[RMDB]
RNA sequence: GGGAACGACUCGAGUAGAGUCGAAAACGGCACUUUUUAAAAAGGAGGACAUCAUGCCAACACUACAAGGUAAAACACAGUAACGAUUUGGCACGAUGUCAGCUCACGGACAAGUGUACAAAUUUAACUCCUCUUACCUGUUCGCAGGUAAGAGGAGAAAAGAAACAACAACAACAAC
Reactivity to 2A3 in 0.01 (KOAc 150mM, MgCl2 10mM, bicine 150mM(pH8.5), 24C), signal-to-noise 2, nucleotides 027 to 126: c010g040g040c010a020c060u060u060u050u110u230a100a180a020a000a010g050g010a010g010g030a010c000a000u010c000a000u030g040c000c020a030a010c040a000c020u030a040c040a160a100g060g030u100a140a050a110a020c060a040c030a030g010u020a030a030c140g110a240u070u000u000g010g000c020a010c030g010a010u000g000u010c000a000g010c000u000c000a160c000g000g000a000c040a060a040g000u020g010u140a100c080a010a110a020u100u150u050a120a040
Reactivity to DMS in 0.01 (KOAc 150mM, MgCl2 10mM, bicine 150mM(pH8.5), 24C), signal-to-noise 1, nucleotides 027 to 126: c090g060g010c010a050c000u060u000u000u000u000a080a040a070a110a140g000g010a000g000g010a040c000a010u040c010a010u000g010c000c000a000a010c300a050c020u000a020c090a060a130g000g000u000a110a010a070a170c150a020c270a080g000u000a000a130c150g000a230u000u000u000g000g000c020a040c100g000a050u000g000u000c000a050g010c120u000c010a110c090g010g030a030c260a010a000g000u000g010u000a090c130a020a020a090u010u040u000a100a100